[RMDB]
RNA sequence: GGGAACGACUCGAGUAGAGUCGAAAACGUACGUGGAGACACGUACGACGUGACUUCGGUCACGAAUUGAGGCAACUCCUGCGCCUCUCGCGCGAGGCGUCGGUGGUCGGCGAGCCCACGGACGCAAAAACUCGCGCGAACAUAACUAGCAGGAGAAAUAAUUAUCCUGAUUCGUCAGGAUAAUUAUAAAAGAAACAACAACAACAAC
Reactivity to DMS in 0.01 (KOAc 150mM, MgCl2 10mM, bicine 150mM(pH8.5), 24C), signal-to-noise 4, nucleotides 027 to 156: c020g020u000a010c010g040u000g010g010a300g000a300c000a010c000g000u000a010c010g010a090c050g010u000g000a010c000u000u020c300g050g000u000c000a000c000g010a060a050u010u010g020a070g010g020c040a090a110c010u000c000c000u000g020c030g010c020c010u000c020u000c020g000c010g020c010g010a030g020g000c020g030u000c030g010g070u010g010g000u000c040g000g010c140g020a290g020c200c000c020a050c010g000g020a020c020g030c170a030a050a070a070a300c030u000c000g020c000g020c000g020a010a040c050a080u000a080a070c100u010a130g030c010a030g030g010a030g000a050a080
Reactivity to 2A3 in 0.01 (KOAc 150mM, MgCl2 10mM, bicine 150mM(pH8.5), 24C), signal-to-noise 7, nucleotides 027 to 156: c010g000u000a000c000g000u000g000g030a050g010a030c000a000c000g000u000a000c010g000a010c000g000u000g000a000c000u050u060c300g090g000u000c010a010c010g020a050a100u090u160g000a000g000g000c020a100a300c100u000c000c000u000g000c000g010c000c000u030c050u010c010g000c010g000c000g000a010g010g020c010g020u010c070g100g000u010g010g000u020c040g020g160c190g060a030g000c000c000c010a000c020g110g000a000c000g000c020a060a060a090a100a090c000u000c000g000c000g000c000g000a000a000c000a020u260a120a060c100u110a020g000c000a000g000g000a000g000a020a040